RNA sequence: GGGAACGACUCGAGUAGAGUCGAAAAAAAAUGAAUCAAUUAGCUAAUAUUCACUGAGUGCCCACCAUGUACCCAGUGAUAAAGAUCUGGACUGAUGCUGGUGAAAUUCAAAUAAAUUUAGAUGUAAAAAGGUCUCUCAUGUCAUAAACGAAGCACAUGACGUAGCAUGAUUCGUCAUGCUACGUCAAAAAGAAACAACAACAACAAC
Reactivity to 2A3 in 0.01 (KOAc 150mM, MgCl2 10mM, bicine 150mM(pH8.5), 24C), signal-to-noise 1, nucleotides 027 to 156: a000a000a000a000u140g050a060a010u020c030a020a140u100u070a030g020c020u120a090a020u010a120u220u000c060a000c010u000g010a000g010u050g050c010c010c010a030c020c020a090u150g000u000a000c000c010c060a000g000u000g050a050u100a010a120a000g020a020u010c030u150g000g050a020c050u100g030a020u060g040c040u030g000g020u030g010a010a070a040u080u040c030a040a100a090u230a020a080a000u000u050u080a000g000a020u050g010u140a030a000a010a020a020g010g000u010c000u000c000u000c060a040u000g020u000c040a030u160a110a130a020c040g120a050a070g060c130a040c060a070